[RMDB]
RNA sequence: GGGAACGACUCGAGUAGAGUCGAAAAGCACUAGAGGGCGUAACGGCUGGGUGUAACCCAACUCUAGGUGUGCUGAUUAGCGGGCUUGACUCCGUAACAAAUAGGCGCUGGUGGUAAAAAGCAUCCCUGACCAUAUACAUCUUCGGAUGUAUAUGAAGCUUGUUAGUACGUUCGCGUACUAACAAGCAAAAGAAACAACAACAACAAC
Reactivity to DMS in 0.01 (KOAc 150mM, MgCl2 10mM, bicine 150mM(pH8.5), 24C), signal-to-noise 1, nucleotides 027 to 156: g020c000a080c020u000a170g020a040g000g000g030c000g060u000a080a110c300g020g000c060u000g030g030g040u020g010u010a090a300c050c030c020a030a060c000u000c030u000a050g030g010u000g020u000g040c000u000g000a070u000u010a160g030c190g010g020g020c030u010u000g020a170c110u000c030c000g040u000a200a140c030a080a100a100u000a170g000g020c020g030c030u030g000g010u020g010g000u000a040a160a110a130a020g030c040a090u000c010c020c020u020g000a230c130c000a030u020a000u020a030c010a010u030c010u020u000c300g030g010a000u000g020u000a020u000a030u000g000a070a110
Reactivity to 2A3 in 0.01 (KOAc 150mM, MgCl2 10mM, bicine 150mM(pH8.5), 24C), signal-to-noise 2, nucleotides 027 to 156: g010c010a000c040u000a010g020a040g040g010g000c000g040u040a060a020c030g100g030c040u070g010g000g000u050g020u070a100a130c020c020c000a010a070c020u020c030u020a040g050g110u010g020u010g060c000u050g010a170u040u090a010g070c050g020g030g030c020u080u130g050a100c040u090c060c040g040u050a010a010c030a090a080a070u150a070g020g000c020g010c040u020g000g030u060g020g030u050a110a170a000a000a000g010c020a050u010c030c010c000u040g040a010c000c000a000u000a000u000a000c000a010u000c010u030u030c150g120g010a000u000g000u000a020u000a010u000g010a000a010
Structure probing data (DMS and 2A3) for a 207-nucleotide construct.
DMS adducts were read by reverse transcription with MarathonRT.
Values are in units of 0.01, from 0 to 300, in steps of 10.
The RNA was probed in 150 mM KOAc, 10 mM MgCl2 and 150 mM bicine (pH 8.5) at 24 C.
It was measured as part of the RMDB library M2RFPK.
The DMS profile rests on 1,546 reads.